[RMDB]
RNA sequence: GGGAACGACUCGAGUAGAGUCGAAAACAUUGUCAGAUGGGGAGUUUGGCUGGGGCGGCACAUCUGUUAAAUAAUAACGCAGGUGUCCUAAGGGGGGCUCAUUGAGAACAGAAAUCUCAAGUAGAACAUCGGUCAUAUGAUUCGUCAUAUGACCGAUAAAAGAAACAACAACAACAAC
Reactivity to 2A3 in 0.01 (KOAc 150mM, MgCl2 10mM, bicine 150mM(pH8.5), 24C), signal-to-noise 3, nucleotides 027 to 126: c010a030u080u170g140u200c110a050g120a270u110g050g010g000g000a130g080u100u150u110g140g000c140u050g000g000g010g020c000g020g000c100a000c000a010u000c000u000g000u000u040a120a110a040u220a120a080u120a040a010c060g000c020a000g010g010u030g010u020c010c000u090a070a020g050g030g000g000g010g000c000u000c010a020u010u010g000a010g000a020a000c080a060g130a070a130a030u000c010u000c000a000a060g070u080a050g060a060a010c000
Reactivity to DMS in 0.01 (KOAc 150mM, MgCl2 10mM, bicine 150mM(pH8.5), 24C), signal-to-noise 2, nucleotides 027 to 126: c090a160u000u060g000u000c100a050g010a060u010g000g000g000g050a090g020u030u020u020g030g000c050u020g020g000g000g060c080g000g000c180a030c020a000u000c010u040g010u000u010a010a070a130u020a050a120u000a080a080c300g000c000a010g010g050u000g000u000c050c000u000a070a050g000g000g000g020g000g010c030u000c090a040u020u000g000a020g000a040a030c180a140g000a070a060a080u000c000u000c000a040a020g000u010a060g000a100a020c160

Structure probing data (2A3 and DMS) for a 177-nucleotide construct. The DMS profile rests on 3,105 reads. It was measured as part of the RMDB library RFM100. For 2A3 the reverse transcriptase was SuperScript II with manganese. High 2A3 reactivity points to a flexible backbone, as in loops and unpaired stretches. The reactions ran in a buffer of 150 mM KOAc, 10 mM MgCl2 and 150 mM bicine (pH 8.5), at 24 C.